[RMDB]
This 177-nucleotide RNA was probed chemically with 2A3 and DMS. The 2A3 profile rests on 27,148 reads. Reactivities are given for positions 27 through 126. For DMS the reverse transcriptase was MarathonRT.
RNA sequence: GGGAACGACUCGAGUAGAGUCGAAAAGAUAUGGAAUCACCCAGCCGAAGAACAACUUGUCGGAAACGAUUUCGAAGUUGGGAGGCUGGUGAUUCCUAAGUCAAAGCACCAACUUCGGUUGGUGCAAGCAGUAUAGUAUCUUCGGAUACUAUACUGCAAAAGAAACAACAACAACAAC
Reactivity to 2A3 in 0.01 (KOAc 150mM, MgCl2 10mM, bicine 150mM(pH8.5), 24C), signal-to-noise 9, nucleotides 027 to 126: g010a010u020a010u050g000g010a000a000u020c010a030c090c200c070a100g010c010c020g280a300a300g040a180a010c000a000a000c010u020u060g030u050c010g010g000a010a010a020c030g070a080u050u250u300c230g090a020a000g000u010u010g030g000g110a200g010g000c010u000g000g000u000g000a000u000u000c000c000u000a000a000g000u000c030a030a110a100g000c010a000c010c000a010a000c010u060u120c300g160g000u000u000g010g000u000g000c000a000a010
Reactivity to DMS in 0.01 (KOAc 150mM, MgCl2 10mM, bicine 150mM(pH8.5), 24C), signal-to-noise 5, nucleotides 027 to 126: g010a010u000a090u000g000g000a010a000u000c010a010c190c080c100a010g020c000c000g040a100a150g000a080a070c000a010a000c010u000u000g010u000c000g000g000a010a010a030c040g000a020u000u010u000c250g000a010a010g050u000u000g010g000g000a050g030g040c000u000g000g010u000g000a020u000u000c000c000u000a000a040g010u010c020a090a120a130g000c000a010c000c000a000a010c000u000u010c190g010g010u000u000g000g010u000g000c000a010a040
2A3 adducts were read by reverse transcription with SuperScript II with manganese.